[RMDB]
RNA sequence: GGGAACGACUCGAGUAGAGUCGAAAAGGAGGUGCGCCUAUGAAAAUUAUGUAUUUAGCUGAAGAUUAUUUUAGGAAACAUAAAAUCCGUUCUAACGCUAAUGUGAUAUAUGCAACGCCAAAAGAUGACAGUUCCUAGUCUUCGGACUAGGAACUGUAAAAGAAACAACAACAACAAC
Reactivity to DMS in 0.01 (KOAc 150mM, MgCl2 10mM, bicine 150mM(pH8.5), 24C), signal-to-noise 2, nucleotides 027 to 126: g000g000a070g010g050u010g000c000g000c040c030u020a030u000g000a050a050a010a040u000u050a010u040g030u040a020u020u000u000a060g000c000u010g000a300a060g000a100u000u040a030u050u020u000u000a160g010g000a060a020a130c130a240u030a040a080a080a130u010c020c050g050u030u000c000u000a010a220c290g000c000u020a000a000u040g010u000g020a000u040a040u060a010u000g000c090a040a000c030g010c070c000a090a000a170a030g030a070u070g000
Reactivity to 2A3 in 0.01 (KOAc 150mM, MgCl2 10mM, bicine 150mM(pH8.5), 24C), signal-to-noise 2, nucleotides 027 to 126: g110g020a000g010g000u000g000c090g000c000c010u180a130u000g090a020a000a120a000u230u140a060u180g090u060a090u000u110u020a050g000c050u060g000a000a000g000a070u100u000a150u070u280u090u100a060g080g000a000a090a000c010a000u300a100a000a060a000u000c000c000g010u050u000c000u110a000a140c000g000c000u000a040a040u040g000u000g250a020u010a000u020a000u300g000c000a000a000c000g070c000c070a130a190a000a050g090a140u270g000

The record gives the reactivity of an RNA of 177 nucleotides to DMS and 2A3. For DMS the reverse transcriptase was MarathonRT. It was measured as part of the RMDB library OK1LIB. The RNA was probed in 150 mM KOAc, 10 mM MgCl2 and 150 mM bicine (pH 8.5) at 24 C. For DMS, 1,232 sequencing reads were counted.